Structure probing data (2A3) for a 177-nucleotide construct.
It was measured as part of the RMDB library OK1LIB.
The reactions ran in a buffer of 150 mM KOAc, 10 mM MgCl2 and 150 mM bicine (pH 8.5), at 24 C.
The 2A3 profile rests on 288 reads.
High 2A3 reactivity points to a flexible backbone, as in loops and unpaired stretches.
RNA sequence: GGGAACGACUCGAGUAGAGUCGAAAAUCUUCAUUCCAGAGGCUCAGCAUUUUGUUAUUUGCUCAAAUUAAAGCAUCCUAUUUACGGAUGUGGAGUCGAAGAAAAUGUUUUAGCUUUACCUGUCAUGCGGCCUCGUCAUGUUCGCAUGACGAGGCCGAAAAGAAACAACAACAACAAC
Reactivity to 2A3 in 0.01 (KOAc 150mM, MgCl2 10mM, bicine 150mM(pH8.5), 24C), signal-to-noise 1, nucleotides 027 to 126: u000c000u000u120c300a010u080u070c090c000a000g000a010g090g000c040u040c000a010g000c000a000u000u000u090u000g140u300u190a170u040u040u100g040c000u150c040a110a110a180u210u080a030a030a030g000c000a000u000c000c000u210a300u180u170u300a100c300g000g000a000u000g020u010g000g000a000g000u090c260g000a000a000g090a000a000a000a000u080g160u050u100u000u000a000g000c000u080u080u000a060c000c000u000g060u090c090a000u000g000